[RMDB]
An RNA of 207 nucleotides, treated with DMS and 2A3 and read out base by base. It was measured as part of the RMDB library OK3TST. The DMS profile rests on 2,656 reads. For 2A3, 4,659 sequencing reads were counted. The reactions ran in a buffer of 150 mM KOAc, 10 mM MgCl2 and 150 mM bicine (pH 8.5), at 24 C.
RNA sequence: GGGAACGACUCGAGUAGAGUCGAAAAGCAUCAUUGGUACCUGGUGACUCUAUUCCACACCUGAGCCUCACCUGUUCAUGAUGACUCUGGAACCUCUCUGGGCCUCACCCUGACCUGGUGACUCUGGUCCCCAUCUGGAUGUCACCUGGACCAGGUGGAUUGAUACGAGGUUCGCCUCGUAUCAAUCAAAAGAAACAACAACAACAAC
Reactivity to DMS in 0.01 (KOAc 150mM, MgCl2 10mM, bicine 150mM(pH8.5), 24C), signal-to-noise 1, nucleotides 027 to 156: g020c020a060u000c030a090u020u000g070g050u000a020c010c010u030g060g010u040g030a050c040u000c070u040a090u000u000c030c060a100c090a090c040c060u000g000a070g040c010c020u000c070a050c050c050u010g000u000u000c050a090u010g010a030u000g000a080c040u020c000u010g020g000a030a080c020c010u000c060u020c040u000g030g030g000c000c030u010c040a100c040c000c060u000g010a100c050c040u000g050g040u020g000a020c030u000c010u000g000g000u000c040c050c030c060a200u000c070u000g010g000a080u010g010u000c010a090c020c000u000g000g020a130c040c000a020g040g040u000g000
Reactivity to 2A3 in 0.01 (KOAc 150mM, MgCl2 10mM, bicine 150mM(pH8.5), 24C), signal-to-noise 3, nucleotides 027 to 156: g020c010a010u020c010a030u050u220g060g030u170a220c030c080u040g000g010u010g000a020c000u000c000u120a150u200u120c080c040a090c030a030c060c030u020g010a000g050c030c050u030c000a010c000c010u010g010u040u020c040a030u040g030a030u050g070a120c020u010c050u060g130g020a180a170c010c020u030c010u000c030u070g000g010g050c020c000u030c020a040c020c020c000u020g020a050c010c010u030g000g000u000g000a010c010u000c020u030g030g000u050c050c010c020c000a130u090c020u030g040g010a060u160g010u010c000a010c000c030u020g020g030a120c080c000a000g010g020u040g080